Conditions: 150 mM KOAc, 10 mM MgCl2 and 150 mM bicine (pH 8.5), 24 C. Structure probing data (2A3 and DMS) for a 177-nucleotide construct. It was measured as part of the RMDB library OK2TRN. The 2A3 profile rests on 1,642 reads.
[RMDB]
RNA sequence: GGGAACGACUCGAGUAGAGUCGAAAAAUAUCGGCACAGUCGCUGACGGCGUCGUGCACCGGUUCGCCUACCAGGAUCUGGCCGCCGACCGCUUGCCCCGCAACCCGAGCGGUCAUUGCGACGUUGCGCCGCUAUUCAUAUUCGUAUGAAUAGCGGCAAAAGAAACAACAACAACAAC
Reactivity to 2A3 in 0.01 (KOAc 150mM, MgCl2 10mM, bicine 150mM(pH8.5), 24C), signal-to-noise 1, nucleotides 027 to 126: a020u160a030u080c040g030g000c030a020c000a200g040u050c010g000c190u060g080a070c020g020g050c030g000u040c010g020u110g030c000a000c000c000g020g010u110u120c030g000c010c000u070a100c030c050a020g000g050a080u060c030u070g000g020c000c040g000c020c030g000a020c010c010g020c040u010u060g060c060c000c000c000g030c010a030a040c020c000c050g020a000g000c030g020g000u030c010a000u040u180g010c040g000a020c100g060u080u150g000c060
Reactivity to DMS in 0.01 (KOAc 150mM, MgCl2 10mM, bicine 150mM(pH8.5), 24C), signal-to-noise 2, nucleotides 027 to 126: a050u000a090u010c070g020g020c030a070c080a090g000u010c030g000c050u000g020a120c170g000g000c000g020u000c080g000u000g060c060a150c110c010g010g020u000u010c100g030c080c020u010a120c110c060a070g000g000a070u010c010u020g020g010c060c050g040c140c100g000a010c040c020g000c020u000u020g000c020c050c010c060g000c100a060a100c060c020c060g000a050g000c000g000g000u000c060a090u000u020g000c040g010a040c060g000u000u000g000c180